[RMDB]
An RNA of 177 nucleotides, treated with 2A3 and DMS and read out base by base.

RNA sequence: GGGAACGACUCGAGUAGAGUCGAAAACGGAUUUCGGGGUUUUUAACCCCACCUUUUCCGGCGCCUAGAGUGAACUGGUCUCGGAACUUAACCCUAAGUAUACACUGGUCACAUCCCAAGUCUUGCGACAAAGCCUAUUUUUCGAAAUAGGCUUUGUAAAAGAAACAACAACAACAAC
Reactivity to 2A3 in 0.01 (KOAc 150mM, MgCl2 10mM, bicine 150mM(pH8.5), 24C), signal-to-noise 5, nucleotides 027 to 126: c030g020g030a070u080u150u260c110g000g010g000g020u070u020u010u070u250a050a040c010c000c000c000a010c000c000u010u050u020u000c010c000g020g020c020g020c000c000u080a060g030a040g140u090g070a120a070c030u030g000g050u050c000u020c050g030g040a080a060c020u070u090a080a080c000c010c010u030a070a010g030u020a050u020a070c030a010c040u020g000g030u020c010a010c020a090u010c010c000c000a010a010g020u010c030u040u050g030c030g000
Reactivity to DMS in 0.01 (KOAc 150mM, MgCl2 10mM, bicine 150mM(pH8.5), 24C), signal-to-noise 4, nucleotides 027 to 126: c060g000g000a080u000u010u020c170g010g010g000g010u000u000u030u030u080a050a050c000c010c000c000a030c090c030u010u000u000u000c010c010g010g000c130g000c040c030u010a080g000a120g020u000g010a080a110c040u010g000g000u000c060u020c060g000g000a090a040c090u010u000a080a110c080c040c090u000a020a060g010u010a080u010a070c020a060c030u000g000g000u000c010a020c070a120u000c000c010c010a070a120g000u000c020u000u010g000c160g010

2A3 is a SHAPE reagent: it acylates the 2'-hydroxyl of flexible nucleotides of all four kinds. Source: RMDB libraries RFM100 and RFMREP, as collected in RNAgym. Conditions: 150 mM KOAc, 10 mM MgCl2 and 150 mM bicine (pH 8.5), 24 C. The 2A3 profile rests on 4,226 reads.